[RMDB]
RNA sequence: GGGAACGACUCGAGUAGAGUCGAAAAGAGCGACCGAUUGGGUGGCCAGCAGUAGAAAUACUGCACCACUUUGUCAAACUCCGAACUUGCUAGAAUCGAAGAUACCAGGUGCUAGGGCGUAGGGAUAACUAUGUCUCCACUUCGGUGGAGACAUAGUAAAAGAAACAACAACAACAAC
Reactivity to 2A3 in 0.01 (KOAc 150mM, MgCl2 10mM, bicine 150mM(pH8.5), 24C), signal-to-noise 2, nucleotides 027 to 126: g050a010g000c050g010a040c080c000g010a050u030u130g030g000g000u010g000g000c100c090a000g010c000a000g010u060a010g000a020a040a010u080a000c020u020g000c000a000c010c000a000c010u000u010u050g030u030c020a040a030a080c000u010c040c010g040a070a030c040u020u100g020c010u070a050g130a050a080u040c050g050a110a010g020a090u090a130c000c030a010g000g010u010g010c020u040a020g000g040g000c000g020u020a050g000g010g050a050u030a110
Reactivity to DMS in 0.01 (KOAc 150mM, MgCl2 10mM, bicine 150mM(pH8.5), 24C), signal-to-noise 3, nucleotides 027 to 126: g010a060g030c080g020a210c180c120g010a080u000u000g000g000g030u000g000g000c150c200a110g000c030a060g000u000a010g000a120a100a090u000a000c010u000g030c000a160c020c000a010c000u000u000u000g010u010c050a070a120a130c010u030c030c040g000a120a070c070u000u030g000c100u000a070g020a050a080u010c030g000a060a070g010a140u030a060c030c050a070g000g000u000g000c060u010a040g000g000g000c030g000u000a060g030g000g010a060u000a040